RNA sequence: GGGAACGACUCGAGUAGAGUCGAAAAUGAUACUAUCCAAGCUACCAUUGGUGACAUCUGUCAAAUUGAUCAUGCUCUAACUGAUCAUGAGCAGGUUAUUUAUGCAAACUUUGCUUUUAUGGUAGGGCCCGUUAAGGAUUUUCGAAUCCUUAACGGGAAAAGAAACAACAACAACAAC
Reactivity to 2A3 in 0.01 (KOAc 150mM, MgCl2 10mM, bicine 150mM(pH8.5), 24C), signal-to-noise 2, nucleotides 027 to 126: u120g040a030u050a180c120u130a100u040c000c030a010a020g090c010u010a030c010c010a010u030u020g000g020u020g040a040c010a080u070c080u100g050u110c040a070a170a060u040u030g000a010u020c040a070u070g050c030u020c030u160a140a150c080u040g070a050u020c010a030u030g000a000g000c000a000g010g000u040u030a090u010u150u050a140u140g000c050a040a100a170c110u070u100u070g010c010u090u080u080u040a050u030g000g000u010a020g040g030g030
Reactivity to DMS in 0.01 (KOAc 150mM, MgCl2 10mM, bicine 150mM(pH8.5), 24C), signal-to-noise 2, nucleotides 027 to 126: u000g000a100u010a150c130u010a080u000c020c010a120a170g000c020u000a020c020c000a060u000u020g000g000u000g010a040c110a100u000c130u000g030u000c040a030a050a080u000u000g010a010u000c000a050u000g010c100u000c120u010a110a150c090u010g000a020u010c060a030u000g010a080g000c010a030g000g000u000u000a050u000u000u000a070u020g010c160a040a050a070c080u000u000u000g010c000u010u000u000u010a040u010g010g020u000a020g020g000g000
Source: RMDB library OK2TRN, as collected in RNAgym. Structure probing data (2A3 and DMS) for a 177-nucleotide construct.